[RMDB]
RNA sequence: GGGAACGACUCGAGUAGAGUCGAAAACUGCGUGGCCUAUUGUUAGACGACGUAUAGUGCAAAUGUUGUCAGACACUUUAGACAAAUUGUCUGAUUACUGUACGUUUGUUUGUUGGGCUCAUGGCUUCACCCGGCAUGUUCGCAUGCCGGAAAAGAAACAACAACAACAAC
Reactivity to 2A3 in 0.01 (KOAc 150mM, MgCl2 10mM, bicine 150mM(pH8.5), 24C), signal-to-noise 8, nucleotides 027 to 129: c050u020g000c010g020u010g020g000c010c000u050a060u130u190g180u110u210a010g010a000c000g000a000c000g010u000a000u010a020g050u070g080c090a030a050a180u300g100u250u150g010u040c000a000g010a000c000a010c010u070u050u070a140g090a200c100a080a080a020u030u010g010u000c000u000g010a020u040u130a010c000u000g020u000a000c000g000u020u050u180g040u030u040u020g080u030u060g000g000g000c000u030c020a010u010g140g000c010u050u040c040a090c010
Reactivity to DMS in 0.01 (KOAc 150mM, MgCl2 10mM, bicine 150mM(pH8.5), 24C), signal-to-noise 4, nucleotides 027 to 129: c120u020g020c000g030u020g020g030c000c030u010a020u000u050g030u070u050a040g030a020c000g010a010c000g000u010a050u020a030g010u010g030c230a030a130a120u060g000u070u070g030u010c000a050g020a040c000a050c040u030u060u000a100g070a210c280a060a050a040u000u020g010u000c000u040g000a040u000u060a020c020u030g030u010a010c030g010u010u000u030g060u010u010u020g030u070u010g010g020g010c020u030c030a000u020g000g000c000u060u010c120a030c120